[RMDB]
RNA sequence: GGGAACGACUCGAGUAGAGUCGAAAACCCGACGCCCGGAUCUGGAGAGCACUCCCGGCCGUAUGGUCGAGUGUCCCCCCGGAGGGAGAGAACCACGCGGAGAAGGCGGAAAAAUCACCUCCAGAGGUAACCCAUUCGUUCGCGAAUGGGAAAAGAAACAACAACAACAAC
Reactivity to 2A3 in 0.01 (KOAc 150mM, MgCl2 10mM, bicine 150mM(pH8.5), 24C), signal-to-noise 5, nucleotides 027 to 129: c000c000c000g010a050c040g020c000c030c000g060g020a070u000c010u050g030g010a010g010a040g090c010a020c070u020c020c060c020g020g000c010c000g200u230a210u300g000g000u020c030g000a020g010u050g090u030c000c000c010c000c000c030g040g040a050g030g000g000a070g010a000g000a020a000c000c000a040c060g060c050g060g040a060g030a120a040g040g020c040g000g000a070a040a050a000a020u050c020a030c000c000u030c000c000a020g000a010g100g010u020a030a030
Reactivity to DMS in 0.01 (KOAc 150mM, MgCl2 10mM, bicine 150mM(pH8.5), 24C), signal-to-noise 4, nucleotides 027 to 129: c060c020c010g010a130c090g040c040c000c060g050g010a110u030c080u050g000g000a000g000a090g040c100a080c060u040c070c120c040g050g000c020c020g040u080a080u120g030g060u000c030g020a030g020u000g000u040c060c030c030c010c060c040g020g060a090g060g000g050a080g000a000g050a150a090c080c040a120c060g000c070g000g000a040g070a100a120g000g060c000g090g000a010a030a070a050a070u030c080a110c000c070u000c040c040a060g010a060g000g000u000a140a110